[RMDB]
RNA sequence: GGGAACGACUCGAGUAGAGUCGAAAAGAUAUGGAGUACGAUGAAAUGGCAAGAACAAGUCGGAAACGAUGUUUGAUGACCCAUGGAGUACUCCUAAGUCAAAUCAAAGGGGUUCGCCCCUUUGAAACAGUUAAUACGGGUUCGCCCGUAUUAACUGAAAAGAAACAACAACAACAAC
Reactivity to 2A3 in 0.01 (KOAc 150mM, MgCl2 10mM, bicine 150mM(pH8.5), 24C), signal-to-noise 2, nucleotides 027 to 126: g040a020u060a050u180g000g000a000g000u020a010c010g130a300u050g020a030a000a040u020g020g000c060a060a060g010a030a050c020a130a010g200u030c010g050g000a030a080a060c010g000a020u030g060u020u010u020g270a280u070g030a050c000c000c020a000u020g020g000a030g000u010a010c010u010c020c000u000a020a000g020u000c030a000a000a220u020c010a000a000a010g010g000g010g000u050u090c170g180c000c010c020c020u000u000u000g000a000a010a000
Reactivity to DMS in 0.01 (KOAc 150mM, MgCl2 10mM, bicine 150mM(pH8.5), 24C), signal-to-noise 5, nucleotides 027 to 126: g000a050u010a300u000g000g010a020g000u000a010c020g010a170u020g000a120a110a000u000g000g000c020a060a200g000a060a050c020a050a040g010u000c000g020g000a120a090a180c010g000a010u000g000u000u000u000g010a060u000g000a300c300c010c000a010u000g000g000a080g010u000a020c010u000c000c010u000a020a080g010u000c030a110a090a140u000c010a000a000a010g030g010g020g010u000u030c300g000c010c000c000c000u010u000u000g000a020a090a190